[RMDB]
RNA sequence: GGGAACGACUCGAGUAGAGUCGAAAACUCGUUGUUCGCAACGAGAAAAAUCCUAAGUCUCAUCAACAGCUGAUGUAAGGAAGCACAUCGGAAACGAUGUGUAGUUCUAUCAUCAGACAUGAUGAGAUAUGGAAAAAAAGGGACCUUCGGGUCCCAAGAUUACAUAGUACUUCGGUACUAUGUAAUCAAAAGAAACAACAACAACAAC
Reactivity to DMS in 0.01 (KOAc 150mM, MgCl2 10mM, bicine 150mM(pH8.5), 24C), signal-to-noise 3, nucleotides 027 to 156: c000u000c000g000u000u030g010u000u020c260g030c040a060a010c020g010a060g000a010a020a080a080a180u000c000c000u000a120a260g020u000c000u000c010a000u010c010a030a080c080a250g000c020u000g010a020u000g010u020a070a300g000g020a010a300g000c000a010c000a010u000c000g030g020a160a140a300c010g020a010u020g000u000g010u000a010g020u000u000c010u010a140u000c000a000u000c000a030g020a000c040a300u000g010a020u010g010a010g010a000u000a110u000g010g010a000a010a080a180a060a160a230g010g010g010a010c000c010u000u000c230g030g030g010u000c000c000c000a000a020
Reactivity to 2A3 in 0.01 (KOAc 150mM, MgCl2 10mM, bicine 150mM(pH8.5), 24C), signal-to-noise 8, nucleotides 027 to 156: c000u010c010g010u000u010g030u050u060c190g040c130a010a000c010g000a010g050a100a030a010a010a010u060c030c000u050a160a040g020u000c000u000c000a000u000c010a030a130c030a200g050c000u000g000a010u010g050u100a160a210g040g000a020a010g010c000a000c000a000u000c010g050g010a100a090a050c010g000a000u000g000u000g000u010a020g000u010u000c010u020a110u080c000a000u000c000a000g050a080c010a060u060g000a000u000g000a000g000a000u010a010u000g000g060a020a040a000a010a020a050a160g060g010g010a010c020c000u050u100c270g190g050g000u000c000c000c000a000a000